Annotation: Source: RMDB libraries RFM100 and RFMREP, as collected in RNAgym. Structure probing data (2A3 and DMS) for a 177-nucleotide construct. For 2A3 the reverse transcriptase was SuperScript II with manganese. Values cover nucleotides 27 to 126.

RNA sequence: GGGAACGACUCGAGUAGAGUCGAAAAGAUCAAGAACUGCGCUCAGGCUUUCGAUCCGUCGUUGGCCACGGCGGCAGACUUGCCUGAUGAGCGGCAGGGAAUCGUUACGGGACCACUUGUCCGAUGGCGGUUAUUUGACGUUCGCGUCAAAUAACCGAAAAGAAACAACAACAACAAC
Reactivity to 2A3 in 0.01 (KOAc 150mM, MgCl2 10mM, bicine 150mM(pH8.5), 24C), signal-to-noise 3, nucleotides 027 to 126: g010a040u110c070a020a010g030a110a040c000u010g000c000g000c000u020c000a000g010g000c000u040u010u040c050g110a140u090c000c010g060u000c000g000u100u050g050g020c000c020a020c040g000g000c000g020g000c000a000g010a030c030u090u080g010c000c010u150g040a160u150g010a020g060c000g090g000c010a010g000g000g020a000a050u030c010g020u050u090a030c050g030g020g020a010c010c010a120c140u130u260g030u010c030c000g030a080u040g130g000
Reactivity to DMS in 0.01 (KOAc 150mM, MgCl2 10mM, bicine 150mM(pH8.5), 24C), signal-to-noise 2, nucleotides 027 to 126: g000a190u020c040a060a090g030a200a230c010u000g000c000g060c020u000c030a050g000g000c000u000u030u000c010g000a300u040c080c070g020u000c020g000u000u050g000g000c220c090a150c000g000g000c000g000g010c300a260g010a010c070u000u030g020c010c010u000g030a120u010g020a070g040c000g000g010c050a030g010g000g020a030a060u010c070g020u010u030a040c080g010g000g000a090c050c170a110c100u000u010g000u000c040c080g000a210u000g030g000